[RMDB]
RNA sequence: GGGAACGACUCGAGUAGAGUCGAAAAUGAGGGACACCUGUGAGACGCGCUCCGCGUGGAGCUUCAACCGGUAUGCGCAUCUGCACACCGAGCGGCACGAGUUGCCGCUGGAAAUGGAAAGUGAACCGCCUUACCUUUCUUUCGAGAAAGGUAAGGCAAAAGAAACAACAACAACAAC
Reactivity to 2A3 in 0.01 (KOAc 150mM, MgCl2 10mM, bicine 150mM(pH8.5), 24C), signal-to-noise 2, nucleotides 027 to 126: u140g000a100g000g040g010a010c010a000c030c000u010g010u050g050a060g020a010c010g010c000g010c030u020c000c010g010c060g040u050g030g030a100g060c000u140u080c030a060a050c050c010g060g010u060a030u190g050c020g010c020a040u050c070u260g060c010a010c000a010c010c030g030a010g000c020g010g000c000a000c030g110a090g080u230u010g000c000c000g000c000u000g020g010a000a080a080u130g020g030a140a010a000g050u090g020a030a020c030c050
Reactivity to DMS in 0.01 (KOAc 150mM, MgCl2 10mM, bicine 150mM(pH8.5), 24C), signal-to-noise 3, nucleotides 027 to 126: u020g000a150g010g000g000a210c050a030c030c050u010g020u000g000a050g010a070c070g010c030g000c000u000c000c020g020c210g020u000g010g020a120g020c200u000u020c080a080a060c010c000g020g000u000a030u010g020c000g010c080a080u000c050u010g010c020a030c030a150c020c020g010a030g010c000g010g000c000a030c030g000a130g010u010u000g000c000c000g010c000u000g010g010a030a100a090u000g000g010a060a080a060g010u010g000a060a180c140c070